[RMDB]
RNA sequence: GGGAACGACUCGAGUAGAGUCGAAAAGAUAUGGACAUGUAGACUCCCUGAGCGUUGAAAUCGGAAACGAUGGAGCUCUGGGAGAACUUAAUGUCCUAAGUCAAAGAGCACUGUUCGCAGUGCUCAACGAUACGGGAUCGUUCGCGAUCCCGUAUCGAAAAGAAACAACAACAACAAC
Reactivity to DMS in 0.01 (KOAc 150mM, MgCl2 10mM, bicine 150mM(pH8.5), 24C), signal-to-noise 1, nucleotides 027 to 126: g010a060u010a300u000g060g000a000c000a040u000g010u000a030g010a300c000u000c000c000c000u000g020a000g040c010g010u010u010g010a040a150a040u000c000g000g000a140a050a210c000g000a010u000g010g000a180g040c000u000c000u010g000g000g000a000g000a000a000c000u000u030a060a000u000g040u000c000c000u000a000a070g010u000c080a050a110a130g000a000g010c000a000c000u000g030u000u030c240g000c000a000g030u000g000c000u000c000a020a060
Reactivity to 2A3 in 0.01 (KOAc 150mM, MgCl2 10mM, bicine 150mM(pH8.5), 24C), signal-to-noise 1, nucleotides 027 to 126: g030a030u140a050u140g000g000a000c000a000u040g070u090a000g020a070c030u000c000c000c010u020g000a000g000c020g180u300u000g000a010a000a040u060c040g020g030a150a100a020c030g000a000u020g060g020a000g000c000u000c000u010g000g000g000a000g010a010a010c000u030u160a100a000u000g000u040c000c000u080a100a020g000u040c060a100a030a140g020a000g000c000a000c020u010g070u120u180c300g000c160a050g000u000g000c000u010c000a010a000

An RNA of 177 nucleotides, treated with DMS and 2A3 and read out base by base. Conditions: 150 mM KOAc, 10 mM MgCl2 and 150 mM bicine (pH 8.5), 24 C. DMS adducts were read by reverse transcription with MarathonRT. Source: RMDB library TTRDEL, as collected in RNAgym.